Overview:
An RNA of 177 nucleotides, treated with 2A3 and read out base by base. The data come from the RNA Mapping Database (RMDB), library OK1LIB. Conditions: 150 mM KOAc, 10 mM MgCl2 and 150 mM bicine (pH 8.5), 24 C.
RNA sequence: GGGAACGACUCGAGUAGAGUCGAAAAGGCCACAGCGCCGUCUUUCUCUCCAACGCGCGCGGAUGACGGCCCGCCCUGUACCGACGGGCCCUACGUGACGUUUGAUACCCUGUUUAUGGUGUCGUCGCCCUGGGCCUACCUUCGGGUAGGCCCAGGGAAAAGAAACAACAACAACAAC
Reactivity to 2A3 in 0.01 (KOAc 150mM, MgCl2 10mM, bicine 150mM(pH8.5), 24C), signal-to-noise 1, nucleotides 027 to 126: g050g000c070c000a170c080a120g000c130g000c030c000g030u030c070u050u100u000c070u000c000u000c000c050a060a060c050g060c000g000c000g050c000g120g160a050u120g050a040c060g000g000c000c000c000g060c010c020c000u170g180u180a100c020c020g080a060c030g000g010g050c000c010c000u000a010c030g070u030g040a020c030g010u020u000u190g080a100u130a130c010c010c010u090g170u210u090u180a150u280g100g000u090g000u030c100g000u050c020g010